[RMDB]
The record gives the reactivity of an RNA of 207 nucleotides to 2A3 and DMS.
RNA sequence: GGGAACGACUCGAGUAGAGUCGAAAAUGUGUGCCGAAAAGCACACACAUAUAAUAAUGCGAUGUUUUGUGCAAAGCACAAAACUCGUCAGAUAAACAGUGGGGCUGAAUUUCUGCCGAACUGUUUAUCAUAUAAAACUAUCCCGUUCGCGGGAUAGCUGUAAAUAUAUCUUCGGAUAUAUUUACAGAAAAGAAACAACAACAACAAC
Reactivity to 2A3 in 0.01 (KOAc 150mM, MgCl2 10mM, bicine 150mM(pH8.5), 24C), signal-to-noise 5, nucleotides 027 to 156: u060g000u000g000u000g010c020c020g160a040a050a030a020g030c010a040c000a000c000a000c020a000u170a020u110a250a140u210a140a080u200g020c010g010a030u090g010u000u010u020u010g010u010g010c140a300a160a130g040c000a010c000a000a000a000a000c000u000c000g040u040c020a030g000a000u010a000a000a000c000a000g010u020g030g200g020g000c030u030g080a130a130u250u290u140c060u130g000c010c020g040a020a010c000u000g000u000u000u000a000u010c000a000u030a000u020a030a020a000a000c000u000a000u000c020c000c000g010u040u050c170g000c000g070g000g000a000u000a000g000
Reactivity to DMS in 0.01 (KOAc 150mM, MgCl2 10mM, bicine 150mM(pH8.5), 24C), signal-to-noise 1, nucleotides 027 to 156: u010g000u000g040u000g040c000c000g030a150a110a250a070g030c010a010c000a010c020a030c040a050u010a190u010a100a150u010a160a090u010g000c020g010a040u020g030u000u010u000u000g010u020g040c020a230a150a300g020c000a020c010a010a010a030a010c010u000c020g010u010c100a040g000a040u000a010a020a000c020a010g020u000g010g020g000g000c000u000g020a130a240u010u000u020c070u020g050c000c000g020a090a010c010u010g010u000u000u000a020u000c010a050u010a020u000a020a000a020a080c000u000a000u010c000c000c010g020u010u000c100g040c020g040g010g000a000u000a000g020
The RNA was probed in 150 mM KOAc, 10 mM MgCl2 and 150 mM bicine (pH 8.5) at 24 C. Values cover nucleotides 27 to 156. The DMS profile rests on 2,498 reads. It was measured as part of the RMDB library RFM130.